Overview:
The record gives the reactivity of an RNA of 177 nucleotides to DMS and 2A3. The data come from the RNA Mapping Database (RMDB), library OK2TRN. The RNA was probed in 150 mM KOAc, 10 mM MgCl2 and 150 mM bicine (pH 8.5) at 24 C. For 2A3, 3,611 sequencing reads were counted.
[RMDB]
RNA sequence: GGGAACGACUCGAGUAGAGUCGAAAACUAGUCUUAGAGGUGGUUUGUGCUAGCAGCUGGAAAGCAGAAGAAACCAAAGAAAACGCCUUUCCUGAAUUGUUUUUAAAAACCUGAGCCCCUUCAAGGGCUACCGUAGUAUGUUCGCAUACUACGGUAGAAAAGAAACAACAACAACAAC
Reactivity to DMS in 0.01 (KOAc 150mM, MgCl2 10mM, bicine 150mM(pH8.5), 24C), signal-to-noise 7, nucleotides 027 to 126: c030u010a080g010u010c050u000u010a110g010a100g010g020u000g010g010u000u000u000g020u010g010c050u000a060g020c040a080g010c030u010g010g020a060a080a040g010c030a090g010a090a110g000a090a090a100c090c080a060a060a130g000a060a060a080a100c080g000c090c030u000u000u010c030c010u000g000a080a080u010u010g000u000u000u000u020u010a050a080a060a080a100c060c080u000g000a120g000c020c000c010c040u010u010c190a120a100g000g000g010
Reactivity to 2A3 in 0.01 (KOAc 150mM, MgCl2 10mM, bicine 150mM(pH8.5), 24C), signal-to-noise 3, nucleotides 027 to 126: c010u030a020g060u030c030u030u070a030g000a040g140g020u100g030g020u050u070u070g060u050g040c040u040a040g040c040a020g000c030u040g020g060a090a070a000g020c030a020g050a120a020g050a110a140a030c030c000a070a150a000g060a000a060a000a000c040g030c010c000u010u010u020c000c000u020g070a130a120u070u030g050u030u020u020u050u150a100a210a010a010a010c010c010u030g060a030g090c020c010c030c000u100u060c060a060a030g030g000g010